[RMDB]
RNA sequence: GGGAACGACUCGAGUAGAGUCGAAAACGAGAUGAAGAUGAUCUUGGUGGUGUUUUGCGCCAGGAAACCCAGGAUGGUAUUGAAGGCCUCCUUCUUGAUGAAGUGCGCCUCGUCGACCAGCAGGAGGGAUUACCACUCUCUUCGGAGAGUGGUAAUCAAAAGAAACAACAACAACAAC
Reactivity to 2A3 in 0.01 (KOAc 150mM, MgCl2 10mM, bicine 150mM(pH8.5), 24C), signal-to-noise 8, nucleotides 027 to 126: c030g010a020g040a060u170g070a120a060g080a180u200g030a060u030c000u020u020g040g000u020g020g070u070g090u080u090u220u230g060c030g020c010c000a040g080g010a060a060a020c010c000c000a020g070g020a060u100g010g050u070a080u130u210g090a100a010g030g000c000c010u010c010c000u010u030c010u080u230g130a220u250g030a050a030g020u030g040c040g000c010c000u020c030g070u040c030g010a030c020c010a020g000c010a020g030g140a040g020g080
Reactivity to DMS in 0.01 (KOAc 150mM, MgCl2 10mM, bicine 150mM(pH8.5), 24C), signal-to-noise 5, nucleotides 027 to 126: c050g020a090g010a040u000g000a100a130g000a050u030g000a040u000c000u000u010g000g020u000g000g020u020g000u000u010u020u020g010c070g020c000c000a050g010g010a060a100a110c100c010c010a090g030g000a120u000g000g010u010a090u020u050g010a160a050g010g020c020c030u000c250c010u000u010c010u010u030g010a080u010g010a030a070g050u020g020c300g000c020c000u000c030g010u040c050g000a060c020c030a050g010c080a060g000g020a080g010g010